This 207-nucleotide RNA was probed chemically with DMS and 2A3.
Values cover nucleotides 27 to 156.
It was measured as part of the RMDB library OK3TST.
The 2A3 profile rests on 3,492 reads.
The RNA was probed in 150 mM KOAc, 10 mM MgCl2 and 150 mM bicine (pH 8.5) at 24 C.
RNA sequence: GGGAACGACUCGAGUAGAGUCGAAAAAAUCAAAGAUAAGUUUGGGCUUUUGUCUCCAGUAACUGGGAGCCUAGUGGCCAUUUUUGCUGCAAAGAGGAAGCUGGGCAAGUGUAGCAGUGAGGCUGAAGAAAAGGGAAUUAAAUUUUGGCCAUGUUCACACUGGUAAAUAGUUCGCUAUUUACCAGUGAAAAGAAACAACAACAACAAC
Reactivity to DMS in 0.01 (KOAc 150mM, MgCl2 10mM, bicine 150mM(pH8.5), 24C), signal-to-noise 2, nucleotides 027 to 156: a070a050u010c010a050a060a080g020a100u000a020a050g010u000u000u000g010g010g010c010u000u010u000u010g000u000c020u000c030c040a120g020u010a050a080c090u000g010g010g030a110g010c050c020u010a090g010u000g010g010c000c030a140u000u010u010u000u000g010c030u020g030c050a050a100a100g010a280g020g000a060a060g020c040u010g020g010g010c060a030a100g000u000g010u000a050g020c030a050g020u000g030a080g020g020c010u010g020a040a070g010a020a040a070a040g010g000g010a030a090u000u010a020a060a160u000u000u000u010g010g010c030c020a100u010g010u010u000c010a230
Reactivity to 2A3 in 0.01 (KOAc 150mM, MgCl2 10mM, bicine 150mM(pH8.5), 24C), signal-to-noise 5, nucleotides 027 to 156: a000a000u130c060a070a060a010g050a100u090a090a090g000u030u070u100g030g000g000c020u070u080u120u140g060u050c020u010c030c000a010g050u090a100a070c090u080g030g010g040a020g020c010c030u070a040g030u060g040g000c010c030a030u090u060u060u100u080g020c020u030g000c020a060a070a080g030a040g050g010a040a010g010c030u050g000g030g000c010a020a030g030u040g010u060a030g010c030a010g010u010g040a020g020g000c020u030g010a020a010g040a020a090a010a010g030g020g040a030a020u110u100a070a030a080u070u100u060u070g010g030c040c020a030u080g010u020u020c050a020